This 177-nucleotide RNA was probed chemically with DMS. Values cover nucleotides 27 to 126.
RNA sequence: GGGAACGACUCGAGUAGAGUCGAAAAGAUAUGGAGCGAACAAGAUCUCGUUAGGCUUUUGACGCUUCAAGGGUCGGAAACGACCCGAAGAGCGAUAAGCCUAACGAGAUCUUGUCGCUCCUAAGUCCUCUAUAUCCUGCUUCGGCAGGAUAUAGAGAAAAGAAACAACAACAACAAC
Reactivity to DMS in 0.01 (KOAc 150mM, MgCl2 10mM, bicine 150mM(pH8.5), 24C), signal-to-noise 2, nucleotides 027 to 126: g000a130u010a300u000g000g000a010g010c000g000a110a040c010a000a000g010a030u000c000u000c000g020u010u000a010g000g000c010u000u000u000u000g050a210c110g040c010u000u000c010a030a300g010g000g030u000c000g050g000a060a160a290c020g040a020c010c000c000g000a090a220g000a020g030c000g010a100u010a020a010g010c000c000u000a010a000c020g000a000g000a000u000c000u000u000g010u000c000g020c000u010c000c010u000a000a090g010u000c040
Source: RMDB library TTRINS, as collected in RNAgym.